[RMDB]
RNA sequence: GGGAACGACUCGAGUAGAGUCGAAAAUGGAGCGGGGGUGUCGUGGACCAGCGAGGGUGGCGCGCUGCGUUGACGCGGUGCUCUGCUUGGCUGUGUGUCGGUGUGGCCUGCCCCCCUGUAGAGGGGUGUCGUAGGCUACCCGUUGAAGCGAGGGAAAUCAUGUCGCAAUGUUCGCAUUGCGACAUGAAAAAGAAACAACAACAACAAC
Reactivity to 2A3 in 0.01 (KOAc 150mM, MgCl2 10mM, bicine 150mM(pH8.5), 24C), signal-to-noise 1, nucleotides 027 to 156: u150g040g000a070g090c110g020g040g000g020g000u070g000u010c030g010u030g050g030a040c000c010a010g000c050g010a210g050g030g000u030g050g050c030g000c080g000c010u000g000c000g060u090u300g040a180c110g010c000g000g000u000g050c020u030c010u030g010c000u050u090g080g000c020u020g000u050g020u070g030u100c040g000g000u160g000u000g030g000c000c000u000g000c000c000c000c000c040c000u040g050u170a160g050a040g070g040g000g030u100g030u050c110g030u000a000g010g030c000u000a000c000c020c000g020u010u120g000a080a000g030c020g030a070g030g020g000a000a130a020